The record gives the reactivity of an RNA of 177 nucleotides to 2A3 and DMS.
Values are in units of 0.01, from 0 to 300, in steps of 10.
[RMDB]
RNA sequence: GGGAACGACUCGAGUAGAGUCGAAAAAAAGAUAUGGAGUCCUAAAGCGUGAUGACCCACAUGGAGGUGUAUGUCGGAAACGACAUACGCGAAGUGUGGCAAGCGCGAUUGGGACUCCUAAGUCAAAGUUGAGUAAGUACUUCGGUACUUACUCAACAAAAGAAACAACAACAACAAC
Reactivity to 2A3 in 0.01 (KOAc 150mM, MgCl2 10mM, bicine 150mM(pH8.5), 24C), signal-to-noise 2, nucleotides 027 to 126: a000a020a000g040a010u030a010u060g000g000a010g000u020c000c020u030a030a020a030g020c000g000u050g030a300u050g010a160c010c020c000a020c000a000u030g010g150a270g300g000u000g000u010a000u000g000u000c020g000g000a020a010a010c000g000a000c010a000u010a010c010g000c030g010a040a030g000u010g010u030g010g010c000a050a010g000c030g000c050g000a030u150u290g010g000g000a000c000u020c000c000u000a000a000g000u000c050a090a030a130
Reactivity to DMS in 0.01 (KOAc 150mM, MgCl2 10mM, bicine 150mM(pH8.5), 24C), signal-to-noise 2, nucleotides 027 to 126: a070a060a130g000a020u000a090u010g000g000a080g000u000c000c000u040a040a150a220g010c010g060u000g000a110u010g000a050c300c000c000a000c030a020u000g010g000a300g020g000u000g000u000a000u000g010u010c000g010g000a010a000a010c000g020a020c000a000u000a000c000g000c000g020a300a240g040u000g020u000g020g000c020a060a030g040c000g020c020g000a160u010u000g000g010g000a000c020u000c000c000u000a000a030g000u000c030a080a110a140